[RMDB]
RNA sequence: GGGAACGACUCGAGUAGAGUCGAAAAUCAUAACAGAGGAUUCCCGUGAUACACAGCAAGGGCAAAGGCAAGAAGACUUGCAACGGCAAUUAGAGAAUGAACGAUCAAGGUUGAUUGCUCGAUUUUCUCAUUCAUUAUACUCCUUUCAACACGGAUAUGAUUUACGACGAUUCGUCGUCGUAAAUCAAAAAGAAACAACAACAACAAC
Reactivity to 2A3 in 0.01 (KOAc 150mM, MgCl2 10mM, bicine 150mM(pH8.5), 24C), signal-to-noise 3, nucleotides 027 to 156: u090c020a020u060a230a040c040a040g040a030g090g060a030u020u070c000c010c010g010u030g040a120u120a080c090a010c040a120g050c030a020a050g020g030g000c050a070a030a010g070g010c020a050a020g060a040a000g050a110c010u040u010g000c050a070a030c030g020g000c030a020a010u080u050a020g010a000g000a050a040u070g020a030a020c030g030a010u020c020a050a060g300g020u150u080g110a080u040u070g010c000u010c050g070a070u080u010u030u030c040u000c020a010u070u010c000a010u080u170a020u100a100c010u060c000c010u060u180u120c080a070a080c080a030c080g120g020a020u100a070
Reactivity to DMS in 0.01 (KOAc 150mM, MgCl2 10mM, bicine 150mM(pH8.5), 24C), signal-to-noise 2, nucleotides 027 to 156: u000c060a150u040a110a190c020a120g040a160g030g040a300u000u010c020c000c020g000u010g000a160u010a090c060a080c090a120g040c020a090a060g040g020g010c020a090a080a040g020g000c050a080a050g010a040a140g020a110c010u020u010g020c020a110a100c060g000g000c040a130a150u000u020a070g020a100g000a080a040u010g010a010a020c000g020a070u000c050a030a150g040g000u000u010g030a120u040u020g000c080u000c010g040a080u000u000u000u000c010u000c010a060u000u000c100a070u010u000a160u020a170c030u000c010c000u010u000u000c040a100a110c060a070c060g030g000a080u000a060